[RMDB]
RNA sequence: GGGAACGACUCGAGUAGAGUCGAAAAGCGGUCCAUCGCCAGGUCGGACAGCCCGAUGCCGUCGAUCGCCCGGAGCUGCUGUUCGUAGCGGCGCAUCCGGGCCGGUCCGAGCACCUGCCGCCACGGACCUACCACCUCCAUUCGUGGAGGUGGUAGGAAAAGAAACAACAACAACAAC
Reactivity to DMS in 0.01 (KOAc 150mM, MgCl2 10mM, bicine 150mM(pH8.5), 24C), signal-to-noise 3, nucleotides 027 to 126: g050c100g020g000u010c020c040a080u000c120g020c140c030a070g000g000u010c040g000g000a050c070a180g000c060c010c040g010a060u010g010c040c010g030u010c090g010a050u000c030g040c030c030c030g000g000a100g020c030u000g050c010u000g010u000u020c300g010u030a170g000c010g010g010c000g000c060a080u000c020c050g020g000g000c020c030g020g000u000c010c030g000a130g010c060a130c050c010u010g000c120c020g020c070c060a090c130g010g010a090
Reactivity to 2A3 in 0.01 (KOAc 150mM, MgCl2 10mM, bicine 150mM(pH8.5), 24C), signal-to-noise 2, nucleotides 027 to 126: g060c020g010g040u050c030c040a080u040c030g000c060c020a030g000g040u120c040g010g040a100c040a030g000c020c050c010g010a080u070g060c060c020g030u120c100g010a050u060c000g020c010c000c000g040g000a050g030c140u210g000c020u040g080u150u080c070g100u110a030g030c000g010g020c010g000c030a110u000c070c010g010g000g000c000c000g010g010u000c020c000g020a020g000c020a050c010c000u070g010c050c000g010c000c030a070c070g030g000a000